[RMDB]
RNA sequence: GGGAACGACUCGAGUAGAGUCGAAAACAUGGUGGUACAUGCCAGUGGUCCUUGCUGCUUGGGAUGCUGAGGUCGGGGGAUCACUUGAGCCCAGGAAGUUGAGGCUACAGUGAGCCAUGAUUGCACCCUUUGCGAACGUGUUCGCACGUUCGCAAAGAAAAGAAACAACAACAACAAC
Reactivity to DMS in 0.01 (KOAc 150mM, MgCl2 10mM, bicine 150mM(pH8.5), 24C), signal-to-noise 2, nucleotides 027 to 126: c040a020u000g010g040u000g010g000u010a090c120a030u000g010c130c070a090g000u000g010g020u000c030c020u000u000g000c060u000g000c050u020u010g000g010g010a080u010g020c060u000g000a050g000g010u010c120g030g020g000g000g000a070u000c030a050c020u000u000g010a060g040c000c000c010a050g000g000a080a130g010u010u000g030a090g010g000c010u000a070c040a090g000u000g020a210g000c000c000a040u010g010a090u010u000g000c090a120c050c020
Reactivity to 2A3 in 0.01 (KOAc 150mM, MgCl2 10mM, bicine 150mM(pH8.5), 24C), signal-to-noise 2, nucleotides 027 to 126: c010a050u020g040g000u040g020g100u170a030c020a070u130g110c000c000a010g010u010g010g000u090c010c000u020u050g040c020u080g040c000u040u050g010g000g050a130u180g180c040u030g000a040g080g000u120c020g000g000g000g080g040a040u050c000a000c000u080u100g040a000g000c000c000c010a030g060g110a100a060g100u210u220g050a110g020g000c030u070a050c020a040g020u020g020a010g090c030c010a020u050g080a190u010u110g080c060a060c000c040

This 177-nucleotide RNA was probed chemically with DMS and 2A3. Source: RMDB library OK2TRN, as collected in RNAgym. Reactivities are rounded to 0.1 and cut off at 0 and 3. Reactivities are given for positions 27 through 126.